[RMDB]
RNA sequence: GGGAACGACUCGAGUAGAGUCGAAAAGAUGGCAAUGGGCCGUCGUGGUGGCGAGCUAUUCCGGUGCGGACCAUGCCACGAUCAGCGAGGUGGUGCUGGUCCCGGGGCCUACCGCACUGCUGGCGCCGAGGUCCCAUAAGUUCGCUUAUGGGACCUCAAAAGAAACAACAACAACAAC
Reactivity to DMS in 0.01 (KOAc 150mM, MgCl2 10mM, bicine 150mM(pH8.5), 24C), signal-to-noise 2, nucleotides 027 to 126: g010a050u000g000g010c020a230a170u010g040g010g000c000c020g040u000c010g030u020g020g010u000g000g040c030g000a100g030c040u000a150u000u000c060c020g020g000u000g000c020g020g000a110c160c100a030u000g000c040c000a030c060g010a090u010c050a040g000c030g000a220g010g010u010g020g010u000g000c040u010g010g000u000c030c130c060g020g000g020g000c040c070u000a050c010c010g020c020a060c030u000g000c020u000g000g010c000g000c090c060
Reactivity to 2A3 in 0.01 (KOAc 150mM, MgCl2 10mM, bicine 150mM(pH8.5), 24C), signal-to-noise 2, nucleotides 027 to 126: g040a030u050g030g040c070a130a300u150g030g190g000c020c010g020u030c040g060u050g000g010u020g120g010c060g010a040g040c020u080a170u110u080c020c050g000g070u060g020c050g020g060a160c050c010a030u070g000c010c000a060c000g020a070u080c000a000g060c050g050a100g100g120u120g010g080u150g000c050u030g010g010u010c000c000c000g010g060g000g000c010c000u010a040c010c010g000c000a000c030u040g010c040u030g070g030c020g000c000c030
Source information
This 177-nucleotide RNA was probed chemically with DMS and 2A3. For DMS the reverse transcriptase was MarathonRT. The DMS profile rests on 1,715 reads. Conditions: 150 mM KOAc, 10 mM MgCl2 and 150 mM bicine (pH 8.5), 24 C. For 2A3 the reverse transcriptase was SuperScript II with manganese.